Description:
Conditions: 150 mM KOAc, 10 mM MgCl2 and 150 mM bicine (pH 8.5), 24 C. The record gives the reactivity of an RNA of 207 nucleotides to 2A3 and DMS. It was measured as part of the RMDB library RNAMAK.
RNA sequence: GGGAACGACUCGAGUAGAGUCGAAAAGCUAGUCUAUUUCGAUAGACUAGCGUGACUCCUAAGUCGGUGAGGGGGAGCAUAUGUCGGAAACGACAUCAUGCGAGGAUCCUCCCCACCACCGAUAUGGACCAAAGAUUGCCAAUUCGUUGGCAAUCAACCAUCUUCUAGCUUUCGAGCUAGAAGAUGGAAAAGAAACAACAACAACAAC
Reactivity to 2A3 in 0.01 (KOAc 150mM, MgCl2 10mM, bicine 150mM(pH8.5), 24C), signal-to-noise 4, nucleotides 027 to 156: g000c010u000a010g000u010c000u000a030u010u160u100c240g120a030u000a000g000a000c000u000a000g000c000g000u030g040a070c070u010c020c000u040a190a030g030u000c010g010g000u030g050a120g010g000g010g000g000a020g000c010a010u000a000u020g000u000c010g050g030a080a050a080c020g010a010c000a000u030c050a010u010g030c070g040a090g030g080a050u030c010c010u010c000c010c000c000a090c010c000a000c000c000g000a000u010a050u080g030g010a010c030c030a030a110a100g000a000u000u010g000c010c000a020a010u080u080c270g060u090u020g000g000c000a000a000u000c000a000a010
Reactivity to DMS in 0.01 (KOAc 150mM, MgCl2 10mM, bicine 150mM(pH8.5), 24C), signal-to-noise 2, nucleotides 027 to 156: g020c000u000a000g000u010c000u000a010u020u010u020c290g030a030u000a020g010a010c000u020a000g020c010g030u010g000a100c090u020c020c030u010a120a270g040u010c000g010g020u000g010a070g010g010g010g030g020a090g120c050a050u000a020u010g010u000c000g000g000a220a080a260c000g000a010c020a000u000c090a080u010g020c010g000a240g040g020a180u000c030c020u000c020c000c010c030a020c020c020a050c020c020g040a080u000a260u000g000g000a060c050c060a110a150a030g010a060u000u000g000c000c000a020a060u000u000c300g000u000u020g000g030c000a000a000u010c010a070a150